[RMDB]
RNA sequence: GGGAACGACUCGAGUAGAGUCGAAAAACUGCCCUGCGAGACGUUGUCCUCCAGGUCGCUCUGGCAGCCCUCGUCGUUGAGCGAGUUCUGCUUGGUGACCUUGGGCGACAGCAGCUUGACCAGGUCACUCAGAGAGGGCAUUCGUGCCCUCUCUGAGAAAAGAAACAACAACAACAAC
Reactivity to 2A3 in 0.01 (KOAc 150mM, MgCl2 10mM, bicine 150mM(pH8.5), 24C), signal-to-noise 4, nucleotides 027 to 126: a000c040u060g020c000c000c000u010g020c000g000a010g010a050c020g000u000u000g010u000c010c000u020c020c020a000g000g000u000c000g010c010u210c100u150g010g010c000a000g010c000c030c000u000c000g030u000c040g070u100u300g090a110g060c000g010a000g000u010u020c000u000g000c000u010u030g000g000u000g010a010c000c000u010u030g010g000g000c070g000a000c000a000g000c000a020g010c010u010u020g020a070c060c010a010g030g000u010c030a030
Reactivity to DMS in 0.01 (KOAc 150mM, MgCl2 10mM, bicine 150mM(pH8.5), 24C), signal-to-noise 2, nucleotides 027 to 126: a120c100u000g000c080c010c000u000g020c060g010a140g010a050c010g040u010u000g000u000c000c000u030c000c000a060g000g000u000c000g000c000u020c050u050g010g000c030a010g000c170c080c000u000c020g070u010c010g040u000u050g000a260g010c000g010a020g040u020u000c000u000g000c000u000u050g040g000u000g000a000c000c000u000u040g010g000g050c300g000a000c000a000g030c030a070g010c070u000u000g010a220c300c000a010g000g000u000c030a100
Source information
The record gives the reactivity of an RNA of 177 nucleotides to 2A3 and DMS. It was measured as part of the RMDB library RFM100. Reactivities are given for positions 27 through 126. The DMS profile rests on 1,991 reads. The 2A3 profile rests on 5,951 reads. Conditions: 150 mM KOAc, 10 mM MgCl2 and 150 mM bicine (pH 8.5), 24 C. For DMS the reverse transcriptase was MarathonRT. Values are in units of 0.01, from 0 to 300, in steps of 10.